[RMDB]
RNA sequence: GGGAACGACUCGAGUAGAGUCGAAAAUUCUGACUUGUGUACACUGUAAGAUGACAAGUUUGUGUUAUUUUAGGUCACUUAGUUUGCAGAAAUUUGUUACAGCAGUAAUAGAACAAGUGGUUAUCCAUCCAAUAUUACAGUUCGCUGUAAUAUUGGAAAAAGAAACAACAACAACAAC
Reactivity to 2A3 in 0.01 (KOAc 150mM, MgCl2 10mM, bicine 150mM(pH8.5), 24C), signal-to-noise 6, nucleotides 027 to 126: u030u000c020u050g150a050c000u000u020g010u010g020u070a010c020a000c050u010g010u040a050a060g040a130u020g010a000c000a010a020g010u000u010u030g190u010g030u050u170a070u040u090u030u070a040g050g010u230c030a030c280u040u020a020g100u080u050u060g000c000a010g080a100a020a020u000u010u020g010u010u010a010c010a010g020c010a000g020u050a040a090u070a110g110a050a010c000a000a000g000u020g010g020u090u050a090u040c000c000a030
Reactivity to DMS in 0.01 (KOAc 150mM, MgCl2 10mM, bicine 150mM(pH8.5), 24C), signal-to-noise 9, nucleotides 027 to 126: u010u000c020u010g020a050c010u000u010g010u000g000u000a140c200a030c010u000g010u000a030a040g000a300u000g000a010c000a010a030g010u000u000u000g000u000g000u000u000a030u000u000u010u000a040g000g010u010c250a080c040u000u000a040g000u010u010u000g000c020a020g000a010a010a020u000u000u000g000u000u010a010c020a190g000c010a020g000u000a050a110u000a130g010a100a020c010a010a010g010u000g010g000u000u000a070u000c040c090a140
Chemical mapping of a 177-nucleotide RNA with 2A3 and DMS. Source: RMDB library OK2TRN, as collected in RNAgym. Conditions: 150 mM KOAc, 10 mM MgCl2 and 150 mM bicine (pH 8.5), 24 C.